RNA sequence: GGGAACGACUCGAGUAGAGUCGAAAAGCUUCAAUGGAGUUAGUGGGUGACAUUUCACUGGGAUUGAUAAUACCAACCUGCGGCACAUAUAGCGCACCCGCCAAAGCACACAACACGGCUGAUAAUGCCUCUUAGCAUUUUUCGAAAUGCUAAGAGGAAAAGAAACAACAACAACAAC
Reactivity to 2A3 in 0.01 (KOAc 150mM, MgCl2 10mM, bicine 150mM(pH8.5), 24C), signal-to-noise 6, nucleotides 027 to 126: g000c010u080u060c050a050a090u100g030g000a130g090u080u160a060g000u150g030g010g000u040g030a030c050a090u060u120u060c050a050c050u050g030g030g090a090u070u060g030a030u070a240a040u070a110c020c020a030a020c010c020u030g010c010g000g050c040a020c020a040u190a010u080a040g040c040g000c040a030c010c010c000g000c010c020a070a070a000g010c020a010c000a000c000a120a050c020a010c060g030g000c020u010g030a060u070a190a050u170g050
Reactivity to DMS in 0.01 (KOAc 150mM, MgCl2 10mM, bicine 150mM(pH8.5), 24C), signal-to-noise 6, nucleotides 027 to 126: g010c040u000u000c080a100a100u000g000g020a070g020u000u010a060g040u010g000g010g020u000g000a070c110a050u000u000u000c050a060c080u000g020g010g010a110u000u000g000a080u010a050a050u000a210c080c030a080a050c060c010u000g010c030g000g010c020a040c060a080u000a070u000a060g000c040g010c070a090c030c020c030g000c080c070a040a060a090g000c050a040c060a060c090a040a050c100a070c090g010g000c020u010g000a080u010a080a090u010g000

This 177-nucleotide RNA was probed chemically with 2A3 and DMS. Values cover nucleotides 27 to 126. For DMS, 6,248 sequencing reads were counted. 2A3 adducts were read by reverse transcription with SuperScript II with manganese.